RNA sequence: GGGAACGACUCGAGUAGAGUCGAAAAUAUUGGUAGGACCUACACCCGUCAACGUAAUUGGAAGAGGCUUGAUGACUCGGAUGGGCUGUACUUUAAAUUUUCCAAUUAGUCCUAUUAAAACUGUACCCCUUAUUGCUUAGUUCGCUAAGCAAUAAGGAAAAGAAACAACAACAACAAC
Reactivity to 2A3 in 0.01 (KOAc 150mM, MgCl2 10mM, bicine 150mM(pH8.5), 24C), signal-to-noise 4, nucleotides 027 to 126: u080a010u010u030g010g000u000a000g010g000a000c000c000u040a010c030a030c010c020c010g050u040c040a120a090c100g100u060a110a060u090u080g020g000a060a030g030a060g030g030c040u140u160g150a150u120g020a160c000u010c060g030g010a020u020g040g010g000c140u030g020u080a020c020u130u180u060a040a140a110u070u060u060u000c000c010a000a010u030u040a050g000u010c000c000u000a030u010u050a030a040a010a010c030u040g060u150a070c010c000
Reactivity to DMS in 0.01 (KOAc 150mM, MgCl2 10mM, bicine 150mM(pH8.5), 24C), signal-to-noise 4, nucleotides 027 to 126: u010a100u000u000g010g010u000a010g010g000a040c020c250u010a040c040a070c030c000c010g030u000c070a130a140c140g020u010a060a090u010u010g010g000a100a060g010a040g000g010c040u000u010g000a140u000g000a060c040u000c010g010g010a060u000g000g010g010c300u000g010u000a020c270u000u020u000a050a060a130u000u000u000u000c020c020a020a060u000u000a080g000u000c000c000u000a010u010u000a010a020a070a110c180u010g000u000a170c140c060
Annotation:
Structure probing data (2A3 and DMS) for a 177-nucleotide construct. For 2A3 the reverse transcriptase was SuperScript II with manganese.